Annotation
An RNA of 177 nucleotides, treated with DMS and 2A3 and read out base by base.
[RMDB]
RNA sequence: GGGAACGACUCGAGUAGAGUCGAAAAGAUUAUGGUAUUUAGUCCUUUGGAGUGUUCGUACCAAUAACCACAUCAGGUCUCCAAGGUGAAUAGCCUCUGGUCAAAUGUAUUAAUGUAGAUAAGGGAACUAGACCCACCUAUUCGUAGGUGGGUCUAGAAAAGAAACAACAACAACAAC
Reactivity to DMS in 0.01 (KOAc 150mM, MgCl2 10mM, bicine 150mM(pH8.5), 24C), signal-to-noise 2, nucleotides 027 to 126: g000a080u000u000a020u030g000g020u000a060u000u010u010a100g000u030c040c000u000u030u050g000g010a020g050u030g010u070u020c060g000u010a020c070c030a030a130u000a130a090c070c060a050c150a090u040c090a040g000g000u000c020u000c000c000a050a050g010g000u010g000a060a020u010a080g000c040c020u000c050u000g000g000u000c020a060a070a100u020g010u000a070u070u020a090a080u000g000u010a040g000a150u000a090a070g020g020g000a030a130
Reactivity to 2A3 in 0.01 (KOAc 150mM, MgCl2 10mM, bicine 150mM(pH8.5), 24C), signal-to-noise 2, nucleotides 027 to 126: g040a000u020u080a010u230g010g000u010a090u000u030u030a090g090u260c000c010u000u000u070g030g000a030g050u180g080u170u300c110g030u060a190c010c000a010a020u030a060a110c030c010a030c000a090u160c030a120g010g000u000c020u010c040c000a080a030g090g010u110g130a060a030u060a010g000c000c000u000c050u040g050g000u000c000a020a150a120u100g000u120a080u140u150a180a100u140g100u120a060g050a160u030a030a110g080g000g010a050a000